[RMDB]
Source information
Structure probing data (2A3) for a 207-nucleotide construct. The data come from the RNA Mapping Database (RMDB), library VIROID. Values cover nucleotides 27 to 156. The RNA was probed in 150 mM KOAc, 10 mM MgCl2 and 150 mM bicine (pH 8.5) at 24 C.
RNA sequence: GGGAACGACUCGAGUAGAGUCGAAAAGGCUCAUUUCGACUAGAGGCGGCAGUCCUCAGUACUCUUACUCUUUUCUGUAAAGAGGAGACUGCUGGACUCGCCGCCCGAGUUCGAAGAUGGGCCAACUUCCGAACGAAGAUACGCGGCGGGAGGGAUCGGGUAAUAGGUUGUUCGCAACCUAUUACCCAAAAGAAACAACAACAACAAC
Reactivity to 2A3 in 0.01 (KOAc 150mM, MgCl2 10mM, bicine 150mM(pH8.5), 24C), signal-to-noise 1, nucleotides 027 to 156: g000g000c000u020c010a000u020u010u000c000g030a000c020u040a060g000a300g110g010c010g000g000c000a010g010u020c010c000u000c000a050g010u190a300c010u020c040u090u170a200c010u010c030u020u190u210u100c150u240g300u300a010a000a000g020a020g000g000a000g000a000c000u000g070c060u010g010g000a000c000u080c130g030c000c000g000c000c000c000g000a000g000u090u000c000g010a010a010g130a050u010g000g000g000c000c000a000a000c000u010u000c020c050g080a170a080c040g010a050a080g020a140u170a100c080g040c040g100g000c060g040g040g040a070g070g050g000a000u120c140